[RMDB]
RNA sequence: GGGAACGACUCGAGUAGAGUCGAAAAGUAAGGACUGCGUAACAUGAUAUGCAUGUAUGCCAUGAGCAUUCGCACCCUAUGUAGCCAGUUUGCACGCAGUGACCCAUUGACGGAGGGUCGCCGUGCAUCUACCUACGGUCUUCGGGCCGUGGGUAGAAAAAGAAACAACAACAACAAC
Reactivity to DMS in 0.01 (KOAc 150mM, MgCl2 10mM, bicine 150mM(pH8.5), 24C), signal-to-noise 9, nucleotides 027 to 126: g020u020a070a060g000g010a070c110u010g010c060g010u020a120a060c040a030u000g000a160u030a080u020g010c020a070u020g000u010a050u010g010c010c020a120u030g010a160g010c020a060u000u010c030g010c030a040c070c020c020u010a040u020g000u010a100g010c040c020a080g010u010u010u000g010c020a010c010g010c110a090g020u000g000a010c010c000c000a120u020u030g010a100c220g000g010a130g000g000g000u000c000g010c000c010g010u000g000c010a030
Reactivity to 2A3 in 0.01 (KOAc 150mM, MgCl2 10mM, bicine 150mM(pH8.5), 24C), signal-to-noise 9, nucleotides 027 to 126: g100u100a030a050g050g010a030c060u030g000c030g050u060a090a030c020a030u050g050a100u130a080u300g100c020a010u080g030u050a030u050g000c010c040a170u250g030a030g070c010a020u040u050c020g000c010a040c010c000c010u030a050u110g080u040a020g050c010c010a050g020u020u060u010g010c000a000c010g020c060a030g000u000g010a000c000c000c010a030u040u220g130a120c130g090g090a100g070g000g000u000c000g000c000c000g000u000g000c000a000

Chemical mapping of a 177-nucleotide RNA with DMS and 2A3. Values cover nucleotides 27 to 126. The DMS profile rests on 73,901 reads. The 2A3 profile rests on 96,805 reads. The RNA was probed in 150 mM KOAc, 10 mM MgCl2 and 150 mM bicine (pH 8.5) at 24 C. Reactivities are rounded to 0.1 and cut off at 0 and 3.